[RMDB]
RNA sequence: GGGAACGACUCGAGUAGAGUCGAAAAACACUGAGCAGUAUAUAAAAUGGCCAUGGUACAUUUGGCUAGGUUUUAUAGCUGGCUUGCCGUAGACAAUUAUGCUUUGCUGUAUCACCAGUUGCGAAAAGAACUGUUUUUAGUUCGCUAAAAACAGUUCAAAAGAAACAACAACAACAAC
Reactivity to 2A3 in 0.01 (KOAc 150mM, MgCl2 10mM, bicine 150mM(pH8.5), 24C), signal-to-noise 3, nucleotides 027 to 126: a010c030a010c040u060g010a000g000c000a020g050u040a020u010a010u010a300a080a030a060u030g000g000c000c000a030u030g000g120u300a140c060a200u030u000u070g020g000c010u000a040g020g090u030u000u030u100a070u020a020g030c020u010g110g060c040u020u040g030c010c010g060u000a030g040a070c030a050a090u210u070a090u240g010c050u050u050u080g010c040u020g010u050a070u070c000a040c150c000a030g010u070u080g090c040g070a030a030a030a060
Reactivity to DMS in 0.01 (KOAc 150mM, MgCl2 10mM, bicine 150mM(pH8.5), 24C), signal-to-noise 4, nucleotides 027 to 126: a040c050a060c070u020g010a060g010c010a050g000u010a110u000a040u000a020a020a030a060u010g000g000c010c010a020u000g020g020u010a070c220a090u010u000u000g010g010c010u000a030g020g010u000u000u000u000a030u000a020g010c020u000g010g000c060u000u000g010c020c030g020u010a050g000a050c060a060a080u010u000a070u000g010c020u000u000u000g000c070u000g010u010a050u010c080a100c060c030a060g010u000u000g000c050g010a080a060a120a120